Structure probing data (2A3) for a 177-nucleotide construct. 2A3 adducts were read by reverse transcription with SuperScript II with manganese. The RNA was probed in 150 mM KOAc, 10 mM MgCl2 and 150 mM bicine (pH 8.5) at 24 C. Reactivities are given for positions 27 through 126.

[RMDB]
RNA sequence: GGGAACGACUCGAGUAGAGUCGAAAACUCUGGAGCAACUGCAACAGUUUUGACGGCUGGCCGCAGACGAGUAUCGCGUUGAUUAGAUGCUCCACGCCGGCCUCAACAUCGCCGUUUGUGAUCAGGGCGGCGAGGCGGAUUUCGAUCCGCCUCGCCGAAAAGAAACAACAACAACAAC
Reactivity to 2A3 in 0.01 (KOAc 150mM, MgCl2 10mM, bicine 150mM(pH8.5), 24C), signal-to-noise 1, nucleotides 027 to 126: c020u000c000u010g040g000a000g050c000a030a000c000u040g000c000a030a020c020a130g010u110u000u000u030g070a030c150g000g000c020u000g000g000c000c080g020c140a020g070a190c230g000a000g010u090a000u020c000g000c100g110u050u020g080a240u300u210a070g000a000u000g000c000u000c000c000a000c000g000c000c000g000g000c000c000u030c000a000a060c000a060u010c070g030c000c000g020u060u060u200g020u050g050a060u050c000a000g000g060g030